[RMDB]
RNA sequence: GGGAACGACUCGAGUAGAGUCGAAAAGUGCAACCGCAACCUACAGGGUUUAUGUCGCAACAGCCUGCUUCAUUUAUGCAACCGCAAAGGACUGGUGGUGCAGGCUUUAUACAGCCUCAACGGACUGGAGCAAUGCCGGCAUAUCAACCUCAAAUGACUCCGAUUUAGUAUUCGUACUAAAUCGGAGAAAAGAAACAACAACAACAAC
Reactivity to DMS in 0.01 (KOAc 150mM, MgCl2 10mM, bicine 150mM(pH8.5), 24C), signal-to-noise 2, nucleotides 027 to 156: g030u010g000c050a070a180c080c030g000c040a130a060c030c040u000a100c020a060g020g060g000u000u000u000a000u000g030u000c110g030c040a090a100c100a060g040c010c000u000g010c000u000u000c030a060u010u000u000a100u020g010c060a070a140c000c000g010c100a120a140a260g010g000a140c050u020g030g000u000g020g000u010g020c050a070g010g030c010u000u020u000a090u010a140c010a030g000c000c000u000c000a110a220c160g000g000a030c030u000g030g020a090g020c060a110a110u010g000c030c020g000g020c020a020u000a030u000c060a060a040c000c000u000c040a090a090a040u000g000a230
Reactivity to 2A3 in 0.01 (KOAc 150mM, MgCl2 10mM, bicine 150mM(pH8.5), 24C), signal-to-noise 4, nucleotides 027 to 156: g090u060g030c020a070a120c090c050g030c040a060a000c000c030u100a060c070a080g000g000g050u020u050u010a020u010g010u030c010g020c030a050a170c020a290g020c010c010u030g000c000u010u040c030a090u020u070u180a160u180g050c060a120a100c010c020g100c210a300a110a100g000g020a070c030u030g050g000u000g000g000u000g010c000a000g000g000c000u000u020u000a010u000a010c000a000g010c010c010u120c110a140a100c100g020g110a150c020u020g010g020a050g060c020a000a030u030g100c150c000g020g000c010a010u030a020u090c040a010a050c000c000u090c040a090a090a120u200g030a080